[RMDB]
RNA sequence: GGGAACGACUCGAGUAGAGUCGAAAAAGAAAACGCCAAAAUGGAUUUAAAGUAUCCCUAGAAGGCGGGCAUGUUACCAUGCAAAGUUAUCGACAAUAACUUACUAGAAGAUCGAAAGAUCAAAAAACAUACAUGGUAUGUUCGCAUACCAUGUAUGAAAAGAAACAACAACAACAAC
Reactivity to 2A3 in 0.01 (KOAc 150mM, MgCl2 10mM, bicine 150mM(pH8.5), 24C), signal-to-noise 3, nucleotides 027 to 126: a000g090a000a100a000a020c020g010c000c000a000a020a010a060u080g020g000a030u020u080u280a110a100a010g070u050a020u010c000c000c000u010a060g030a220a030g040g000c000g010g020g000c000a010u010g020u120u120a060c100c000a000u000g010c010a020a020a040g010u000u020a030u050c100g090a050c040a080a010u020a010a010c010u030u050a010c020u040a040g140a300a010g000a060u010c010g020a080a010a000g010a000u000c000a010a100a020a020a000a000
Reactivity to DMS in 0.01 (KOAc 150mM, MgCl2 10mM, bicine 150mM(pH8.5), 24C), signal-to-noise 5, nucleotides 027 to 126: a060g010a110a070a090a080c020g040c010c000a030a120a090a070u000g020g000a050u000u000u000a110a130a190g020u020a030u000c000c010c060u000a040g000a180a130g010g020c010g000g010g010c010a010u000g010u010u000a130c220c020a030u000g010c030a140a040a010g000u000u000a000u000c070g010a130c300a110a090u000a000a010c000u010u010a220c060u000a060g000a080a110g010a010u000c010g000a120a050a100g000a030u020c020a010a030a040a050a050a090